Structure probing data (DMS) for a 177-nucleotide construct. Reactivities are given for positions 27 through 126. The reactions ran in a buffer of 150 mM KOAc, 10 mM MgCl2 and 150 mM bicine (pH 8.5), at 24 C.

[RMDB]
RNA sequence: GGGAACGACUCGAGUAGAGUCGAAAAGAUAUGGAUAUUACGACUGAGUAGAAGUAACGAUAAGUCCGCCAUCGGAAACGAUGGAUGGACUUUUGACGUUACCUACUCAGUCGUAAUAUCCUAAGUCCUGUGGAAGGAGGUUCGCCUCCUUCCACAGAAAAGAAACAACAACAACAAC
Reactivity to DMS in 0.01 (KOAc 150mM, MgCl2 10mM, bicine 150mM(pH8.5), 24C), signal-to-noise 1, nucleotides 027 to 126: g010a120u010a300u010g010g000a000u010a000u000u000a000c010g020a020c010u000g010a020g010u000a000g000a200a180g040u010a000a010c000g040a250u010a010a020g020u000c000c000g010c000c010a010u010c000g030g010a130a100a220c000g000a010u000g020g000a070u000g040g000a000c010u010u000u000u000g010a220c080g000u000u000a000c000c010u000a000c010u000c000a000g000u000c000g010u000a000a010u000a000u000c000c000u000a010a080g000u000c060